[RMDB]
RNA sequence: GGGAACGACUCGAGUAGAGUCGAAAAGAUAUGGACCUGGUGUGCUUUUGACGCAGUACAGGUCGGAAACGACCUUGACUGCGAUAAGCACCCAGGUCCUAAGUCAAAAGACAGCUUCGGCUGUCAAUCUCUUUCAUCCGUUCGCGGAUGAAAGAGAAAAAGAAACAACAACAACAAC
Reactivity to DMS in 0.01 (KOAc 150mM, MgCl2 10mM, bicine 150mM(pH8.5), 24C), signal-to-noise 1, nucleotides 027 to 126: g040a080u010a300u000g000g010a000c020c000u000g020g000u030g040u000g000c010u000u000u000u000g010a250c120g000c000a000g000u000a110c150a010g030g000u000c000g000g000a090a110a210c010g000a010c000c000u000u030g070a040c000u000g010c000g000a070u000a050a030g040c020a010c080c000c000a000g020g010u000c000c000u000a000a080g010u000c010a200a120a170a240g000a010c020a000g010c040u000u000c290g040g050c000u000g000u000c010a030a160